[RMDB]
RNA sequence: GGGAACGACUCGAGUAGAGUCGAAAAGAUAUGGAAUGUUUCUGAGGCUAGAGCUCUGUUCGGAAACGAACAAGAGCUCUUGGACCCUCAGAGAACAUUCCUAAGUCAAACAGCGGUUCGCCGCUGAGCAAAAAGGAUGGUUCGCCAUCCUUUUUGCAAAAGAAACAACAACAACAAC
Reactivity to DMS in 0.01 (KOAc 150mM, MgCl2 10mM, bicine 150mM(pH8.5), 24C), signal-to-noise 2, nucleotides 027 to 126: g030a080u000a300u010g030g000a020a010u000g020u000u000u000c010u000g000a030g010g000c030u010a030g010a010g010c000u000c000u000g020u000u000c000g000g010a210a120a230c010g030a020a010c000a050a160g010a000g010c000u000c000u000u000g000g000a120c300c020c020u000c000a000g000a030g000a000a010c010a000u000u000c000c000u000a010a120g010u000c010a100a100a280c010a020g020c010g010g000u000u000c260g000c000c040g010c000u010g000a100